[RMDB]
RNA sequence: GGGAACGACUCGAGUAGAGUCGAAAAUCAGCACACCUCACGGGUAUUCUGAAGCCUUGGAAACUCGUGUCAUUGAAAAGGACACCCCAAAAUUUGCGGCGAUGUCAGCUGGAGCUGUUUUGAAACCCGCUACGAAGGUUUUCGAACCUUCGUAGCGAAAAGAAACAACAACAACAAC
Reactivity to DMS in 0.01 (KOAc 150mM, MgCl2 10mM, bicine 150mM(pH8.5), 24C), signal-to-noise 1, nucleotides 027 to 126: u000c020a010g010c020a140c080a060c080c030u010c010a030c020g000g000g010u000a070u000u000c000u020g000a050a120g000c220c240u000u000g000g010a020a050a060c010u010c000g000u000g010u010c080a020u000u020g000a160a060a120a120g000g020a060c020a060c000c010c000c040a060a110a120a220u000u000u010g020c130g000g060c110g030a020u000g000u000c040a040g030c080u000g000g000a090g010c010u000g010u000u000u000u020g020a050a080a120c030c030
Reactivity to 2A3 in 0.01 (KOAc 150mM, MgCl2 10mM, bicine 150mM(pH8.5), 24C), signal-to-noise 1, nucleotides 027 to 126: u010c000a000g000c040a000c000a050c080c010u030c000a010c000g010g030g010u240a300u040u000c000u000g130a130a070g100c070c090u020u040g010g000a030a040a000c000u040c030g010u020g040u030c030a070u120u210g090a050a040a070a070g110g000a000c040a020c000c010c000c040a030a050a140a170u100u070u070g070c130g020g020c050g100a120u090g000u000c010a040g010c050u050g000g080a050g030c000u040g000u020u000u100u030g050a090a050a040c000c020